RNA sequence: GGGAACGACUCGAGUAGAGUCGAAAAGGUUGCUGCCGUAUUCGCAAUGUGCCAUCGUACUGCACUAUGGGCACUGAUGCAGUGUGGAACGACACUCGCAACACUUACGAAGCAUGCGGUGUAACACGUAGGAAAGAGGCUUCGGCCUCUUUCCUACAAAAGAAACAACAACAACAAC
Reactivity to 2A3 in 0.01 (KOAc 150mM, MgCl2 10mM, bicine 150mM(pH8.5), 24C), signal-to-noise 2, nucleotides 027 to 126: g010g010u030u030g000c060u090g120c010c000g020u050a160u080u150c070g000c100a030a070u070g000u000g000c000c000a020u010c030g050u090a120c070u160g110c110a000c020u010a040u140g060g150g000c000a000c050u080g030a110u070g010c040a000g000u000g010u050g030g250a150a000c090g020a000c010a000c000u110c120g020c010a010a010c000a050c140u120u160a040c060g030a060a010g010c000a000u040g000c000g000g000u000g000u000a000a000c030a020c120
Reactivity to DMS in 0.01 (KOAc 150mM, MgCl2 10mM, bicine 150mM(pH8.5), 24C), signal-to-noise 2, nucleotides 027 to 126: g020g020u000u000g020c000u070g120c000c020g000u010a050u000u000c190g050c060a020a110u020g000u010g010c000c050a170u020c110g000u000a080c160u080g000c170a000c020u000a060u000g000g020g010c010a030c020u000g000a160u000g030c020a010g000u020g000u030g030g010a110a080c230g000a000c040a030c020u000c150g010c000a000a080c100a170c190u050u040a100c050g000a070a070g070c010a050u020g000c000g000g020u000g020u010a090a000c100a070c200